Overview: The data come from the RNA Mapping Database (RMDB), library TTRDEL. The record gives the reactivity of an RNA of 177 nucleotides to DMS and 2A3. The 2A3 profile rests on 1,569 reads. The reactions ran in a buffer of 150 mM KOAc, 10 mM MgCl2 and 150 mM bicine (pH 8.5), at 24 C. The DMS profile rests on 772 reads. For DMS the reverse transcriptase was MarathonRT.

RNA sequence: GGGAACGACUCGAGUAGAGUCGAAAAGAUAUGGAGGUCGAUGAGGAACUACGUCGAUGCGGUCGGAAACGACCGGGCAGACGCCGAGACCUCCUAAGUCAAAGUAACGCGGUUCGCCGCGUUACAACCUUUCCUUGCAGUUCGCUGCAAGGAAAGGAAAAGAAACAACAACAACAAC
Reactivity to DMS in 0.01 (KOAc 150mM, MgCl2 10mM, bicine 150mM(pH8.5), 24C), signal-to-noise 1, nucleotides 027 to 126: g000a050u000a300u000g000g000a050g020g040u000c000g010a170u000g000a240g000g000a170a110c120u020a240c000g000u000c000g000a170u030g000c000g010g010u010c000g010g010a060a030a150c020g000a040c000c020g000g010g030c140a250g000a040c000g000c000c020g000a090g000a020c020c000u010c000c000u010a000a110g020u000c050a120a020a060g000u000a000a000c000g010c010g000g000u000u000c300g020c000c000g030c000g010u000u000a010c010a050a100
Reactivity to 2A3 in 0.01 (KOAc 150mM, MgCl2 10mM, bicine 150mM(pH8.5), 24C), signal-to-noise 1, nucleotides 027 to 126: g000a030u060a070u190g010g000a000g000g050u000c050g130a300u220g070a230g100g000a170a000c160u210a090c300g000u010c000g000a040u110g300c000g000g000u010c010g060g030a090a030a000c050g000a020c000c020g000g000g000c000a000g000a010c000g000c000c000g030a040g000a010c000c000u000c000c000u020a000a000g000u000c010a060a060a000g000u010a000a000c000g010c010g000g050u070u150c270g050c150c010g000c020g000u050u000a000c000a000a020